[RMDB]
RNA sequence: GGGAACGACUCGAGUAGAGUCGAAAAUACGUGCUUCUGUGAGAAAACUAAAGAGUGUAGCAAAACCAUGGAGUUUUCUGGCAGCACACUCUCCGUCUCUGAGGUGGAAAUAAUGGUGCGACAACUACUAAUAAAUGGCUUUCGAGCCAUUUAUUAGAAAAGAAACAACAACAACAAC
Reactivity to 2A3 in 0.01 (KOAc 150mM, MgCl2 10mM, bicine 150mM(pH8.5), 24C), signal-to-noise 4, nucleotides 027 to 126: u110a020c040g000u010g000c020u040u060c010u030g050u040g030a040g020a040a060a040a040c030u100a080a170a070g130a060g030u080g020u070a080g090c080a080a100a010a050c040c020a030u110g150g040a090g050u070u020u010u030c010u020g090g000c010a010g000c000a010c000a010c010u040c000u010c020c000g070u020c020u000c050u100g060a040g000g030u050g020g100a030a060a030u160a050a040u130g010g010u030g020c010g020a020c020a080a030c020u170a020
Reactivity to DMS in 0.01 (KOAc 150mM, MgCl2 10mM, bicine 150mM(pH8.5), 24C), signal-to-noise 5, nucleotides 027 to 126: u010a070c120g010u000g020c060u000u010c030u010g010u000g010a060g000a040a040a060a060c050u010a080a110a070g010a110g020u000g010u010a130g020c110a070a050a120a070c060c040a100u020g020g010a080g010u000u000u000u000c020u010g000g000c070a160g000c300a100c010a040c050u000c020u000c050c070g010u000c030u000c050u000g000a070g010g010u010g010g000a040a050a050u000a060a040u010g000g010u000g020c040g010a070c090a040a050c100u010a130